[RMDB]
RNA sequence: GGGAACGACUCGAGUAGAGUCGAAAAACGAUAUUCGUAUCGUGAUAUGAUAUGGAUCGGGAGUGCAAUGAUGUGUGGGAGAACCUAUAUCGGAAACGAUAUAGGACCCACAUUGAGCAUGACCGAUCCUAAGUCGCUGGUUGGGUUUCGACCCAAACCAGCUGAGUCAAUUCGUUGACUCAGCUGGAAAAGAAACAACAACAACAAC
Reactivity to 2A3 in 0.01 (KOAc 150mM, MgCl2 10mM, bicine 150mM(pH8.5), 24C), signal-to-noise 2, nucleotides 027 to 156: a000c030g000a020u080a040u090u200c260g010u070a010u040c000g010u010g020a050u050a090u300g030a010u020a020u120g020g000a000u000c010g000g000g000a080g010u000g000c070a230a300u080g010a040u080g020u020g000u000g010g000g010a300g100a080a060c000c010u010a000u000a000u000c000g000g000a080a030a020c000g010a000u000a000u000a000g000g010a030c000c000c010a030c000a010u010u010g000a010g000c000a010u040g010a000c000c000g000a000u000c000c000u000a000a000g000u000c010g000c170u210g130g020u040u010g010g040g000u080u000u030c090g060a090c030c030c000a030a010a080
Reactivity to DMS in 0.01 (KOAc 150mM, MgCl2 10mM, bicine 150mM(pH8.5), 24C), signal-to-noise 2, nucleotides 027 to 156: a040c010g000a080u000a040u000u000c270g010u010a010u010c000g020u000g020a190u020a070u010g040a140u010a160u000g000g010a010u000c000g000g000g010a300g050u000g000c000a080a100u010g010a070u000g020u000g020u000g000g000g010a110g020a150a140c020c000u010a020u000a000u020c010g080g000a150a030a250c060g000a010u000a010u000a000g010g000a040c010c010c000a000c010a000u000u000g010a070g020c000a040u010g000a300c010c010g010a000u010c000c010u000a000a080g000u000c040g010c040u000g010g010u000u000g010g000g000u000u000u000c230g000a060c000c010c000a020a160a240